[RMDB]
RNA sequence: GGGAACGACUCGAGUAGAGUCGAAAAAACAAAGCAGUGAAGUUUAACAGAGUUCUGAGAAUACCAUGAAAGACAUUAUGCCUGCCUAAACAAAAAGCAGGACAUAACCUAGCUCUGAAUACAUGCCACAAGGAUGAAGCUUGUGAGUAGAGCAAAAACUAGGGUAAAUCUUCGGAUUUACCCUAGUAAAAGAAACAACAACAACAAC
Reactivity to DMS in 0.01 (KOAc 150mM, MgCl2 10mM, bicine 150mM(pH8.5), 24C), signal-to-noise 1, nucleotides 027 to 156: a060a020c010a010a110a140g030c070a040g040u000g020a060a100g000u000u000u000a070a120c050a080g020a180g000u000u010c050u030g020a110g000a090a080u000a150c040c010a060u010g000a070a160a100g000a090c050a100u000u000a030u010g030c050c000u000g010c000c010u020a090a090a220c200a040a080a080a110a070g040c020a000g000g000a040c010a050u000a010a040c080c030u000a030g000c010u000c000u060g000a090a090u000a070c030a070u000g010c020c010a060c060a080a070g000g000a110u020g060a120a190g000c020u010u000g010u000g000a140g030u000a030g010a050g000c000a040a020a100a040
Reactivity to 2A3 in 0.01 (KOAc 150mM, MgCl2 10mM, bicine 150mM(pH8.5), 24C), signal-to-noise 2, nucleotides 027 to 156: a000a000c070a010a050a010g010c090a030g000u080g120a140a030g060u070u090u200a060a040c050a030g030a020g050u120u060c020u020g020a010g020a110a050u090a120c020c010a010u120g090a030a010a060g020a010c030a010u020u010a000u010g020c020c000u000g000c000c020u190a260a220a060c090a010a060a080a030a030g000c000a000g000g050a000c000a010u050a000a060c010c020u000a020g020c000u000c010u030g010a030a050u120a090c050a040u100g020c010c000a020c000a010a010g030g010a050u180g020a070a040g090c000u000u000g030u000g030a010g000u010a000g010a000g000c030a040a000a000a090